[RMDB]
Structure probing data (2A3 and DMS) for a 177-nucleotide construct.
For DMS, 15,350 sequencing reads were counted.
Values cover nucleotides 27 to 126.
The 2A3 profile rests on 8,021 reads.
It was measured as part of the RMDB library OK2TST.
The RNA was probed in 150 mM KOAc, 10 mM MgCl2 and 150 mM bicine (pH 8.5) at 24 C.
RNA sequence: GGGAACGACUCGAGUAGAGUCGAAAAUCGACUUCCCCGGAAGGAAGCUGCUCUUCACCCUCAUCGUCUCACUCCUCGUGGUGCCGCUUCAGGUGGCGCUCAUUCCCAUCCUCAGGGAUUACCAGAACAUCCCCUUAAAAUUCGUUUUAAGGGGAUGAAAAGAAACAACAACAACAAC
Reactivity to 2A3 in 0.01 (KOAc 150mM, MgCl2 10mM, bicine 150mM(pH8.5), 24C), signal-to-noise 2, nucleotides 027 to 126: u100c000g030a010c010u030u010c000c000c000c000g110g050a040a030g050g000a010a020g030c030u050g010c000u020c010u090u060c020a050c020c020c010u030c010a050u040c010g050u000c000u000c020a050c020u000c000c000u030c020g040u040g010g020u020g010c000c010g050c000u090u130c050a070g110g020u000g010g000c010g010c010u020c020a030u010u020c000c010c010a020u020c000c010u050c040a060g040g030g010a020u020u110a060c030c050a040g050a080a020
Reactivity to DMS in 0.01 (KOAc 150mM, MgCl2 10mM, bicine 150mM(pH8.5), 24C), signal-to-noise 9, nucleotides 027 to 126: u010c080g010a120c140u000u000c010c010c030c120g010g010a130a100g010g000a080a080g010c050u010g010c060u000c020u000u000c070a130c050c010c020u000c050a090u000c060g010u010c020u000c030a080c040u000c020c040u000c080g020u000g000g020u000g010c030c010g010c030u000u000c240a090g030g040u000g000g010c020g010c020u000c080a160u000u000c010c000c000a100u000c030c020u000c140a140g010g000g010a050u000u000a070c120c080a140g010a100a200